This 177-nucleotide RNA was probed chemically with DMS and 2A3. Conditions: 150 mM KOAc, 10 mM MgCl2 and 150 mM bicine (pH 8.5), 24 C. For DMS, 1,077 sequencing reads were counted. High 2A3 reactivity points to a flexible backbone, as in loops and unpaired stretches.
RNA sequence: GGGAACGACUCGAGUAGAGUCGAAAAGCUGCCUUUAUGGCACCCGACGCCUCGGGAUAGGCCGGGCGGGAGCUGCCAGCCCGUCCAAGCGUCGAAGCCCCCGGAGAUCCGUAAUGGAGAGAAGGGGGGCCGAGACACAAUUCGUUGUGUCUCGGCCAAAAGAAACAACAACAACAAC
Reactivity to DMS in 0.01 (KOAc 150mM, MgCl2 10mM, bicine 150mM(pH8.5), 24C), signal-to-noise 1, nucleotides 027 to 126: g010c220u040g000c000c010u000u020u040a060u160g030g000c000a120c030c100c000g040a010c000g000c020c000u090c230g000g000g000a070u000a010g000g070c020c060g000g020g030c030g000g000g040a080g070c040u050g000c060c000a300g000c020c000c000g000u010c010c010a080a030g000c080g000u000c000g000a190a070g020c000c000c000c030c010g010g000a300g030a040u000c010c000g030u110a170a110u050g000g030a000g000a080g010a300a120g000g000g000g000
Reactivity to 2A3 in 0.01 (KOAc 150mM, MgCl2 10mM, bicine 150mM(pH8.5), 24C), signal-to-noise 2, nucleotides 027 to 126: g080c060u060g030c040c000u070u230u180a180u230g010g000c000a020c000c020c000g000a000c010g010c030c040u150c130g120g010g000a070u100a040g000g000c000c010g070g000g020c060g040g030g020a090g040c070u130g000c080c010a030g000c010c000c000g000u000c000c000a010a000g000c000g000u000c000g000a070a040g000c000c000c000c000c000g060g000a100g010a080u000c010c010g060u200a190a070u300g040g010a010g010a020g030a040a010g010g000g000g000